[RMDB]
RNA sequence: GGGAACGACUCGAGUAGAGUCGAAAAUGACAAACAGGUCUCACUUUGUGGCUGGAGUAACUAGGUAGAUGGUGGGGCCAAUCAUGAGACCAGAGAAGAAGCGAUUGUGGAGAGAAGAUGAGGAGCUUUGUUUUGGGUGGGUGAAGAAUGAAACUCAGCUCGAUUAUAGGUUCGCCUAUAAUCGAGCAAAAGAAACAACAACAACAAC
Reactivity to 2A3 in 0.01 (KOAc 150mM, MgCl2 10mM, bicine 150mM(pH8.5), 24C), signal-to-noise 2, nucleotides 027 to 156: u100g010a000c060a030a130a020c020a090g020g020u000c020u040c020a030c060u070u150u110g160u080g040g000c050u060g050g040a010g090u060a090a040c020u070a090g090g020u020a010g050a070u090g000g100u120g030g030g000g010c000c010a010a020u040c040a070u050g030a000g030a050c050c070a020g000a000g010a050a000g010a040a030g040c090g050a040u090u150g050u070g030g010a020g010a000g020a080a000g020a030u170g020a020g030g000a010g000c010u120u040u060g080u030u070u110u070g030g000g050u060g000g020g020u030g030a020a010g020a030a050u180g020a000a010a060c150u190c040a040

Chemical mapping of a 207-nucleotide RNA with 2A3. The reactions ran in a buffer of 150 mM KOAc, 10 mM MgCl2 and 150 mM bicine (pH 8.5), at 24 C.